[RMDB]
Source: RMDB library TTRDEL, as collected in RNAgym.
Structure probing data (DMS) for a 177-nucleotide construct.
The DMS profile rests on 1,314 reads.
RNA sequence: GGGAACGACUCGAGUAGAGUCGAAAAGAUAUGGAUUGGAGGGAGCCAGAGACUCGGAAACGAGUCUGUGGCUUUGAUCUCCACUGUCCUAAGUCAAAAGCCGGUCACCGUUCGCGGUGACCGGCAACUAGCACAAAUAGUUCGCUAUUUGUGCUAGAAAAGAAACAACAACAACAAC
Reactivity to DMS in 0.01 (KOAc 150mM, MgCl2 10mM, bicine 150mM(pH8.5), 24C), signal-to-noise 1, nucleotides 027 to 126: g000a050u000a150u020g010g000a040u000u000g000g000a010g000g010g000a030g000c000c000a020g000a040g010a000c000u000c000g020g000a040a050a120c000g000a020g000u000c000u000g000u000g000g000c010u000u010u000g010a090u000c020u000c000c000a020c300u000g030u000c000c000u000a060a100g000u010c030a140a030a120a190g040c020c020g030g040u000c000a000c030c000g000u030u040c220g020c070g000g000u010g000a030c000c010g020g000c040a010a010